[RMDB]
RNA sequence: GGGAACGACUCGAGUAGAGUCGAAAAUCACGGCAGCCGGGCCAACGCGCAUAGAUAAUCUGGUCGCACCGCUGCCCCACAAGGGCACCGACAGGCGCAUCACAGAUAUCACCGAAUGACUUCGGAGCAUAGAAGGAGGCUUCGGCCUCCUUCUAUGAAAAGAAACAACAACAACAAC
Reactivity to DMS in 0.01 (KOAc 150mM, MgCl2 10mM, bicine 150mM(pH8.5), 24C), signal-to-noise 1, nucleotides 027 to 126: u000c010a100c070g020g040c060a120g010c100c000g000g020g000c020c030a120a070c030g000c080g010c090a070u000a040g000a130u000a020a080u030c040u010g000g000u000c070g040c020a140c150c000g010c300u000g010c020c000c000c020a060c280a050a300g000g000g020c000a000c040c000g000a150c140a090g000g010c030g010c120a010u000c030a130c040a020g000a010u000a060u000c000a120c020c060g010a020a030u000g020a270c240u020u020c040g010g060a300g000
Chemical mapping of a 177-nucleotide RNA with DMS. It was measured as part of the RMDB library RFMREP. For DMS the reverse transcriptase was MarathonRT. The reactions ran in a buffer of 150 mM KOAc, 10 mM MgCl2 and 150 mM bicine (pH 8.5), at 24 C. For DMS, 439 sequencing reads were counted.